[RMDB]
RNA sequence: GGGAACGACUCGAGUAGAGUCGAAAACACAAUGAUCCAGGACAAUUUGGAGCGCAGGUAUUUCUGCCAUCGCCAGACAAAAAAUAUAAGUUUGUAGUGCGAAUUUGUCGAGAAGAAAAUUUAGAGGCUAGGUAAUCAUCUUCGGAUGAUUACCUAGAAAAGAAACAACAACAACAAC
Reactivity to DMS in 0.01 (KOAc 150mM, MgCl2 10mM, bicine 150mM(pH8.5), 24C), signal-to-noise 2, nucleotides 027 to 126: c050a090c240a120a110u010g000a100u000c020c040a140g000g010a050c050a020a070u020u020u000g000g010a110g010c150g050c040a020g000g020u000a150u010u030u020c020u000g020c010c130a050u010c020g000c000c020a130g010a080c010a000a010a040a030a060a120u020a090u000a060a070g010u000u000u000g010u010a130g040u020g000c020g010a020a040u010u000u000g020u000c020g000a060g010a070a070g010a110a030a040a090u000u000u000a120g010a140g020g000
Reactivity to 2A3 in 0.01 (KOAc 150mM, MgCl2 10mM, bicine 150mM(pH8.5), 24C), signal-to-noise 1, nucleotides 027 to 126: c050a010c020a000a120u180g040a090u090c010c010a070g060g060a020c000a030a100u050u070u150g080g000a050g010c160g000c030a000g120g000u100a290u140u290u130c020u000g010c020c000a020u030c000g000c050c000a000g060a070c010a030a030a030a000a220a030u300a040u060a180a090g040u000u040u000g020u020a050g070u020g130c080g000a070a000u050u010u010g010u020c010g040a040g000a160a020g110a000a180a000a000u160u140u050a130g020a010g090g030
The record gives the reactivity of an RNA of 177 nucleotides to DMS and 2A3. Conditions: 150 mM KOAc, 10 mM MgCl2 and 150 mM bicine (pH 8.5), 24 C. Values are in units of 0.01, from 0 to 300, in steps of 10. DMS adducts were read by reverse transcription with MarathonRT. Reactivities are given for positions 27 through 126.